[RMDB]
This 207-nucleotide RNA was probed chemically with 2A3. The reactions ran in a buffer of 150 mM KOAc, 10 mM MgCl2 and 150 mM bicine (pH 8.5), at 24 C. Source: RMDB library OK3TST, as collected in RNAgym. The 2A3 profile rests on 455 reads.
RNA sequence: GGGAACGACUCGAGUAGAGUCGAAAAUGCCUAAACCAUAGGAACUAACGGAAGUCGAAGUGGGAGGAUAAAAAACUUGAUGAUAAACAGUACUUGGCGAGGGCAAUUCCAUUGGAGAAGGCAUGUCGCUAGCGGCAAAUAAAUGCUGAACAGAAUACGCUUUUAGGUGAUUCGUCACCUAAAAGCGAAAAGAAACAACAACAACAAC
Reactivity to 2A3 in 0.01 (KOAc 150mM, MgCl2 10mM, bicine 150mM(pH8.5), 24C), signal-to-noise 1, nucleotides 027 to 156: u020g000c010c010u010a160a010a000c000c020a080u100a100g010g070a060a020c000u020a070a090c060g090g040a070a010g090u050c050g000a020a070g020u050g000g030g010a020g050g070a110u300a080a150a000a050a000a010c060u130u040g020a050u050g020a000u200a100a140a020c040a040g020u040a000c010u070u100g030g000c030g020a100g020g000g000c020a000a010u090u010c000c030a050u020u010g040g020a070g030a000a020g000g060c070a020u180g060u110c020g020c100u020a020g040c020g030g010c030a030a030a030u140a060a090a010u160g000c030u040g040a050a000c060a000g040a140a000u090a080